[RMDB]
RNA sequence: GGGAACGACUCGAGUAGAGUCGAAAAGGGGUCGUUUAUGAACCGGCAUACAGGGAGCUCUAUGGCUGAAGCCUCCACGGCCAUACGAGCAUCGAUCUGUAUGUCAAAAUAAACGACGGAGGCACCCAAAAUGACACGUUGUUCGCAACGUGUCAAAGAGUAUGCUGAGGUUCGCCUCAGCAUACUCAAAAGAAACAACAACAACAAC
Reactivity to 2A3 in 0.01 (KOAc 150mM, MgCl2 10mM, bicine 150mM(pH8.5), 24C), signal-to-noise 1, nucleotides 027 to 156: g080g020g020g020u020c020g010u010u010u000a020u030g160a180a170c140c080g010g080c000a000u010a000c000a000g010g000g000a010g010c010u000c000u000a010u010g020g000c010u050g060a080a010g030c000c000u000c000c000a000c000g010g000c000c000a000u040a070c220g000a000g000c000a000u120c000g000a010u010c000u000g000u000a010u000g000u000c000a000a000a000a000u000a000a000a000c000g000a000c020g000g010a010g000g000c000a010c000c000c000a050a130a020a120u100g010a000c000a000c000g000u000u010g020u110u130c170g010c220a000a000c000g000u000g000u000c000a000a000a000
Structure probing data (2A3) for a 207-nucleotide construct. The reactions ran in a buffer of 150 mM KOAc, 10 mM MgCl2 and 150 mM bicine (pH 8.5), at 24 C.